Description: This 177-nucleotide RNA was probed chemically with DMS and 2A3. For 2A3, 2,808 sequencing reads were counted. For DMS the reverse transcriptase was MarathonRT. It was measured as part of the RMDB library TTRDEL.

RNA sequence: GGGAACGACUCGAGUAGAGUCGAAAAGAUAUGGAGCGAGGGAGACCACUAUCGGAAACGAUAGAAGGUCAUCGAUCUCGUCUCCUAAGUCAAAAGUCCCAUGUGAUGUUCGCAUCACAUGGGACAACAUGCGUCUUUGGUUCGCCAAAGACGCAUGAAAAGAAACAACAACAACAAC
Reactivity to DMS in 0.01 (KOAc 150mM, MgCl2 10mM, bicine 150mM(pH8.5), 24C), signal-to-noise 2, nucleotides 027 to 126: g010a010u010a300u010g000g000a040g010c040g000a030g020g020g000a050g020a000c000c010a300c000u000a010u000c000g000g000a120a090a170c000g000a010u000a000g000a140a120g030g010u010c010a100u000c190g000a080u000c020u000c000g030u020c010u000c000c000u000a010a060g020u000c030a050a070a100a140g000u010c000c090c010a020u000g010u010g000a020u000g010u000u050c280g050c020a000u010c000a030c010a010u000g000g000g000a010c000a020a070
Reactivity to 2A3 in 0.01 (KOAc 150mM, MgCl2 10mM, bicine 150mM(pH8.5), 24C), signal-to-noise 2, nucleotides 027 to 126: g000a000u060a020u150g000g010a000g000c000g010a000g010g000g020a060g000a030c020c010a020c030u000a000u000c010g000g070a130a060a030c020g020a000u010a000g120a170a160g050g000u010c010a050u290c020g010a030u010c020u010c000g140u050c000u000c000c000u000a150a030g050u020c030a000a020a060a150g000u000c010c020c030a000u000g020u000g000a010u000g060u110u170c300g000c170a000u020c000a000c000a010u000g000g000g050a010c000a000a000